Structure probing data (2A3) for a 207-nucleotide construct.
It was measured as part of the RMDB library OK3TST.
The RNA was probed in 150 mM KOAc, 10 mM MgCl2 and 150 mM bicine (pH 8.5) at 24 C.
RNA sequence: GGGAACGACUCGAGUAGAGUCGAAAAAUGAUCAGAUGGGUAAAAAAAAUAUUUUUUGUGAUGUACACAUUCUUAGAUAUAUUGUGUAAGGCACAUCAUACUAGAGAAUAAACAAUGACAUGACUACAAUAUAAGGGCUAAUAUUUACUGAGUGCUACCGUGAUAUGACUUUCGAGUCAUAUCACGGAAAAGAAACAACAACAACAAC
Reactivity to 2A3 in 0.01 (KOAc 150mM, MgCl2 10mM, bicine 150mM(pH8.5), 24C), signal-to-noise 2, nucleotides 027 to 156: a000u010g000a000u050c000a040g030a030u040g000g020g010u090a000a000a020a050a000a090a050a000u120a160u090u040u040u100u110u080g040u060g010a060u050g010u060a030c050a000c010a030u140u000c020u040u090a020g040a050u040a030u030a030u140u150g000u000g010u040a030a200g120g000c000a010c000a040u040c040a010u070a020c020u030a030g000a000g030a190a010u170a030a110a000c080a010a060u050g010a040c010a020u050g050a040c010u050a060c070a060a030u040a000u010a090a060g040g000g000c000u000a030a030u010a100u170u060u000a020c030u040g000a000g040u030g000c010u040a050